RNA sequence: GGGAACGACUCGAGUAGAGUCGAAAACCGGAGAUGCCGGAGAACCUUGUCGCGGUUGUGCAGGAUGGAUGGCGAAACAUCCGCCGGCUCAUCGACGCCGGUGCGCGUGUCGCCCUGUCCACCGACGAACUCACAAUGUGUUCGCACAUUGUGAGUUAAAAGAAACAACAACAACAAC
Reactivity to 2A3 in 0.01 (KOAc 150mM, MgCl2 10mM, bicine 150mM(pH8.5), 24C), signal-to-noise 3, nucleotides 027 to 126: c010c000g000g000a130g000a060u260g090c010c000g000g040a090g080a110a100c000c000u050u090g080u030c040g000c010g020g080u050u050g010u100g030c010a040g020g020a040u130g000g010a040u010g010g030c130g050a010a120a000c020a020u030c000c000g000c000c000g030g000c030u050c020a300u170c080g080a060c090g000c010c000g000g020u030g020c080g000c080g050u180g070u130c000g000c000c010c010u040g020u000c010c040a000c010c040g080a120c040g030
Reactivity to DMS in 0.01 (KOAc 150mM, MgCl2 10mM, bicine 150mM(pH8.5), 24C), signal-to-noise 3, nucleotides 027 to 126: c000c000g000g000a190g030a140u030g010c010c030g030g000a060g000a120a110c070c030u000u010g020u010c000g020c280g000g020u000u070g000u010g000c140a060g030g030a060u000g040g010a090u020g000g000c040g010a110a090a040c050a020u020c250c000g000c000c030g000g000c010u030c070a140u030c230g000a090c190g000c010c010g000g020u000g000c240g010c200g000u000g000u040c030g010c000c000c090u000g040u000c020c040a060c070c000g000a160c140g030